[RMDB]
RNA sequence: GGGAACGACUCGAGUAGAGUCGAAAAUCAUGUUUGUUCGCAAACAUGAAAAGAAAGCACGAAAAUAAAAUAAAAGGGAAGGGAACGUGCUCCCACCCAUAAAAACGCACGUGUUCGCACGUGCGAACCUUAAGAAGCUGUUCGCAGCUUCUUAAGGAAAAGAAACAACAACAACAAC
Reactivity to DMS in 0.01 (KOAc 150mM, MgCl2 10mM, bicine 150mM(pH8.5), 24C), signal-to-noise 2, nucleotides 027 to 126: u000c010a000u000g010u000u000u000g010u010u000c220g010c000a000a000a000c000a020u010g010a040a080a060a070g010a100a050a080g000c000a000c010g000a180a080a050a080u010a030a030a050a100u020a060a080a120a040g000g000g000a090a050g020g010g020a040a100c000g000u000g000c010u000c000c020c010a130c020c000c000a140u020a020a020a050a120a110c000g010c000a010c000g040u000g000u000u000c240g020c010a030c000g000u000g000c000g000a010a030
Reactivity to 2A3 in 0.01 (KOAc 150mM, MgCl2 10mM, bicine 150mM(pH8.5), 24C), signal-to-noise 3, nucleotides 027 to 126: u010c000a000u010g000u000u000u010g020u010u050c140g000c120a010a000a000c000a010u010g020a040a040a000a020g050a030a050a010g000c020a000c050g150a110a150a080a140u180a050a110a070a030u170a020a140a050a040g030g010g030a090a080g000g000g010a050a040c010g000u000g000c000u010c000c000c010a010c000c000c010a040u190a050a090a010a000a000c010g000c000a000c000g000u010g050u040u050c250g010c080a000c000g010u000g010c000g000a000a010

The record gives the reactivity of an RNA of 177 nucleotides to DMS and 2A3. Values cover nucleotides 27 to 126. It was measured as part of the RMDB library M2PK50.